Background
The data come from the RNA Mapping Database (RMDB), library TTRDEL. Structure probing data (DMS) for a 177-nucleotide construct. Values are in units of 0.01, from 0 to 300, in steps of 10.

RNA sequence: GGGAACGACUCGAGUAGAGUCGAAAAGAUAUGGACCCAUCUACUGGACGAAGAACUCGGAAACGAGGGAGUCCUAGUAGAGUGGGUCCUAAGUCAAAAGGGGCUUUCAGUUCGCUGAAAGCCCCAAUCAAUAUUCCGCGUUCGCGCGGAAUAUUGAAAAAGAAACAACAACAACAAC
Reactivity to DMS in 0.01 (KOAc 150mM, MgCl2 10mM, bicine 150mM(pH8.5), 24C), signal-to-noise 1, nucleotides 027 to 126: g000a030u000a300u000g000g010a020c000c010c000a100u010c010u010a010c000u020g000g020a010c000g040a090a120g020a130a140c010u000c000g010g000a140a120a280c000g000a030g000g000g000a100g020u000c010c000u010a020g030u000a000g000a040g010u010g010g020g010u010c000c000u000a000a070g000u010c020a050a050a100a130g040g000g030g000c000u010u000u000c010a010g010u000u000c280g000c010u010g000a020a010a010g000c010c000c000c010a000a000